Chemical mapping of a 207-nucleotide RNA with 2A3. 2A3 adducts were read by reverse transcription with SuperScript II with manganese.
RNA sequence: GGGAACGACUCGAGUAGAGUCGAAAAUCCUAUAAUAAGUGGGAUACGCUAAAUUUUUCCGUCUGUAAAGUUUAGAAGAGAUUAUCAGACUAGCGAUGCAUGAUGCCUGUUAGGCGGCUAAUGUUCAGCGAAACCUUAAUAGCAUGACUAUGAACGUCUUAGAAGGAACCUUCGGGUUCCUUCUAAGAAAAGAAACAACAACAACAAC
Reactivity to 2A3 in 0.01 (KOAc 150mM, MgCl2 10mM, bicine 150mM(pH8.5), 24C), signal-to-noise 1, nucleotides 027 to 156: u000c010c000u040a070u110a150a070u120a100a060g060u090g020g000g000a000u020a050c010g000c020u060a040a020a030u090u040u000u000u020c020c030g000u020c000u010g030u020a010a060a060g000u010u030u040a020g020a020a000g000a000g010a070u120u100a040u140c010a000g000a000c000u000a000g000c000g020a020u080g010c000a000u000g000a020u190g010c000c000u000g000u060u000a020g020g020c020g000g000c000u060a070a000u010g010u010u030c050a030g000c000g000a030a020a020c010c060u140u200a020a000u030a020g000c000a020u000g020a050c000u060a020u290g100a110a020c030g000u000